RNA sequence: GGGAACGACUCGAGUAGAGUCGAAAAAGUUUGUAUUAUUGCUGUUAAAUUCUCCCAGUGGAUGCCUAUUGGUGUUUACAGACGAGUAUGGUAUAGACCAUAUAUUACUAUUCUCUCUCUCAGGAGAGGAGAAUAGAUGCAUACAAAGGAGAAGCAACAUACCUCGUCCUUUCGAGGACGAGGUAUGAAAAGAAACAACAACAACAAC
Reactivity to 2A3 in 0.01 (KOAc 150mM, MgCl2 10mM, bicine 150mM(pH8.5), 24C), signal-to-noise 1, nucleotides 027 to 156: a020g050u000u020u120g060u060a120u300u020a050u000u170g040c000u000g060u230u040a110a190a180u160u000c010u000c000c030c010a020g010u020g060g000a040u000g000c050c020u110a220u250u170g000g000u060g050u020u040u030a030c040a020g130a160c030g050a070g060u020a020u030g030g020u030a190u150a300g190a060c000c020a050u050a000u020a030u100u080a060c000u000a000u000u000c000u010c000u000c000u000c000u000c120a120g160g140a030g010a000g010g010a040g000a000a000u000a000g000a000u040g040c020a030u090a150c020a030a080a000g010g000a000g000a000a000g000c020a000a050

Structure probing data (2A3) for a 207-nucleotide construct.